The data come from the RNA Mapping Database (RMDB), library ARCHII. Chemical mapping of a 207-nucleotide RNA with 2A3. 2A3 is a SHAPE reagent: it acylates the 2'-hydroxyl of flexible nucleotides of all four kinds. The RNA was probed in 150 mM KOAc, 10 mM MgCl2 and 150 mM bicine (pH 8.5) at 24 C. For 2A3, 1,599 sequencing reads were counted.
RNA sequence: GGGAACGACUCGAGUAGAGUCGAAAACGCUCCAGCUUACGCUAAAGCUGCGUGAGUUAAUCUCCUUUUGGAGCUGGACUGAUUAGAAUUUCUAGCGUUUUAAUCGCUCCAUAACCUUAAGCUAGACGCUUUUAAAAGGUGGUUCGCCUUUUAAACUCAGUAAAUGUGACUUCGGUCACAUUUACUGAAAAGAAACAACAACAACAAC
Reactivity to 2A3 in 0.01 (KOAc 150mM, MgCl2 10mM, bicine 150mM(pH8.5), 24C), signal-to-noise 3, nucleotides 027 to 156: c020g000c010u000c000c000a000g010c000u010u010a000c000g010c030u130a200a050a300g140c120u070g000c060g010u000g000a000g000u020u020a040a050u060c070u120c040c020u000u050u080u080g000g000a010g010c000u010g000g020a010c020u030g000a000u000u000a010g040a020a000u080u080u060c000u000a000g000c000g000u000u000u000u000a000a000u000c010g030c070u050c000c010a120u150a170a130c020c050u170u140a070a030g000c000u000a000g010a010c020g080c030u030u060u050u030a020a040a000a000g010g020u080g060g300u120u240c150g000c010c000u050u000u000u020a020a030a010c020u010